RNA sequence: GGGAACGACUCGAGUAGAGUCGAAAAGGAAGCAUAUUUGAGGCCUAUACGCAGAUCGCUUUAUACAUAGUUCCUGCAGACUCGGUCAUUUAGUAUCUCAGCUCAGGAUGUACUGCAAGAAAUUGAGCCAUGCCUAAUAGUUCGCUAUUAGGCAUGGAAAAGAAACAACAACAACAAC
Reactivity to DMS in 0.01 (KOAc 150mM, MgCl2 10mM, bicine 150mM(pH8.5), 24C), signal-to-noise 7, nucleotides 027 to 126: g010g000a060a060g010c040a070u000a070u000u010u000g010a090g010g010c050c040u000a120u020a090c110g020c050a050g010a080u000c170g000c050u000u000u000a100u010a090c160a080u010a110g010u000u000c030c000u000g010c080a070g010a090c070u000c070g000g000u010c050a090u000u000u010a080g010u010a050u000c050u000c070a090g010c030u000c070a050g000g000a060u010g000u000a070c040u000g010c050a060a060g000a020a040a120u010u000g010a100g010
Reactivity to 2A3 in 0.01 (KOAc 150mM, MgCl2 10mM, bicine 150mM(pH8.5), 24C), signal-to-noise 5, nucleotides 027 to 126: g060g010a030a030g010c040a040u040a120u140u110u110g060a040g040g000c020c040u100a060u010a130c080g000c030a020g020a080u060c020g020c050u050u090u060a200u040a080c070a050u140a030g030u030u020c000c000u010g000c030a010g020a130c020u030c060g000g030u020c030a020u070u140u050a040g040u040a060u030c040u020c050a010g010c010u000c030a010g050g000a020u040g050u070a060c020u030g030c010a020a050g070a090a130a050u110u100g010a030g030